[RMDB]
RNA sequence: GGGAACGACUCGAGUAGAGUCGAAAAUUUCAUAUUAUCAAAAGAUUGCUCAAAACAAUGUUUCUAACCCGCAAGUUAGGAUGCUACUUGAGAAGGUUAAUGAAUCAAUGCGUGAACUUGAUAAGCAAACUGAAAAUAUCGUAAAAAUCCGCGACAGCCUUAUCAAACGGUUCGCCGUUUGAUAAGGAAAAGAAACAACAACAACAAC
Reactivity to DMS in 0.01 (KOAc 150mM, MgCl2 10mM, bicine 150mM(pH8.5), 24C), signal-to-noise 1, nucleotides 027 to 156: u000u000u020c020a190u010a180u010u000a090u010c040a080a190a210a090g020a200u000u000g020c040u010c100a110a080a050a030c030a060a110u020g010u000u000u000c010u030a070a130c180c000c040g060c040a030a040g000u000u000a040g040g000a080u000g000c010u000a030c010u000u000g000a040g030a080a060g020g000u000u020a030a180u020g020a080a060u000c030a080a110u010g000c030g000u020g000a130a070c070u000u000g020a050u010a010a000g060c030a060a040a250c090u030g000a060a060a090a110u000a040u000c070g030u000a000a070a110a090a140u040c070c070g010c080g030a050c060a120g000
Reactivity to 2A3 in 0.01 (KOAc 150mM, MgCl2 10mM, bicine 150mM(pH8.5), 24C), signal-to-noise 2, nucleotides 027 to 156: u010u110u060c010a010u090a100u200u090a100u060c050a090a120a000a010g050a240u000u110g010c000u040c050a050a090a020a040c020a090a080u110g010u010u020u000c010u020a020a040c010c020c040g000c050a000a000g020u080u100a030g040g030a040u140g050c020u020a020c020u010u030g010a020g030a090a070g070g000u040u060a050a030u120g040a020a060u090c040a050a080u140g030c010g000u040g010a040a020c020u020u010g000a000u060a060a020g020c030a150a070a010c060u030g020a030a030a010a080u120a030u080c000g010u040a120a000a000a010a150u050c050c050g010c000g040a010c030a030g090
Chemical mapping of a 207-nucleotide RNA with DMS and 2A3. Reactivities are given for positions 27 through 156. 2A3 adducts were read by reverse transcription with SuperScript II with manganese. It was measured as part of the RMDB library OK3TST. The RNA was probed in 150 mM KOAc, 10 mM MgCl2 and 150 mM bicine (pH 8.5) at 24 C. For 2A3, 1,265 sequencing reads were counted.